[RMDB]
RNA sequence: GGGAACGACUCGAGUAGAGUCGAAAAGAGGUCUCACAGUGCGAUGAUGGAGGAGCCGAUGGGGAACAUAGUAUACCAGGGCGAGAGAUGAAAUGCCAAGACCCCUGGUGGACUGAGCGAGGCGAAGCCUCCCAGCCCCAUUCGUGGGGCUGGGAGGAAAAGAAACAACAACAACAAC
Reactivity to 2A3 in 0.01 (KOAc 150mM, MgCl2 10mM, bicine 150mM(pH8.5), 24C), signal-to-noise 4, nucleotides 027 to 126: g060a010g050g000u040c010u020c010a040c010a030g050u070g080c030g060a060u030g010a040u070g090g050a060g010g000a010g000c000c010g110a080u070g030g000g010g010a060a000c040a040u110a070g040u040a020u010a070c020c000a030g000g030g010c080g040a120g010a010g010a110u130g120a110a090a080u260g090c050c020a040a040g080a120c000c010c000c000u000g000g010u010g020g010a000c000u000g020a020g050c040g000a010g040g030c040g000a030a000g030
Reactivity to DMS in 0.01 (KOAc 150mM, MgCl2 10mM, bicine 150mM(pH8.5), 24C), signal-to-noise 5, nucleotides 027 to 126: g000a090g000g010u000c020u000c070a130c140a100g000u010g020c060g010a050u000g010a090u020g000g000a060g000g020a090g010c040c050g000a110u010g010g000g000g000a050a100c100a060u000a040g020u000a060u010a010c020c000a010g000g000g020c090g010a120g000a070g010a060u010g030a070a120a100u050g010c050c030a100a100g010a210c300c010c000c000u000g000g010u000g000g000a030c040u000g020a080g020c060g010a100g010g000c030g000a100a110g010